[RMDB]
RNA sequence: GGGAACGACUCGAGUAGAGUCGAAAAGAAAUAAUCAGAGGAAUCGUUUGAAAUCAUCGUAGUAAUCGCGCGAAAAUCACGUGAAAUAAUCAGAGGAAUCGUUUGAAAUCAUCGUAGUAAUCGCGCGUCAGUAGAGAAGAUUCGUCUUCUCUACUGAAAAAGAAACAACAACAACAAC
Reactivity to DMS in 0.01 (KOAc 150mM, MgCl2 10mM, bicine 150mM(pH8.5), 24C), signal-to-noise 8, nucleotides 027 to 126: g010a080a080a060u010a060a080u020c060a090g010a080g010g020a080a060u000c060g010u010u020u010g000a070a080a100u010c070a050u020c070g020u000a070g010u020a070a080u030c000g010c010g020c000g000a010a020a140a080u020c070a010c010g030u000g000a020a100a080u010a070a050u010c030a090g010a020g000g050a110a090u020c050g010u000u010u000g000a050a080a080u010c020a030u020c040g010u000a060g010u010a050a180u010c010g010c010g010c020g000
Reactivity to 2A3 in 0.01 (KOAc 150mM, MgCl2 10mM, bicine 150mM(pH8.5), 24C), signal-to-noise 8, nucleotides 027 to 126: g030a000a070a010u180a040a060u120c060a020g030a020g100g080a080a070u070c050g060u040u130u150g070a060a060a020u120c070a020u070c070g030u020a070g020u050a090a080u090c010g000c000g000c000g010a010a000a000a070u070c030a000c010g000u020g040a030a010a040u160a030a040u110c020a010g020a010g120g140a090a110u090c050g100u050u060u090g060a050a060a010u030c020a010u130c040g000u000a070g000u030a080a030u000c000g000c010g000c000g030

Description
Chemical mapping of a 177-nucleotide RNA with DMS and 2A3.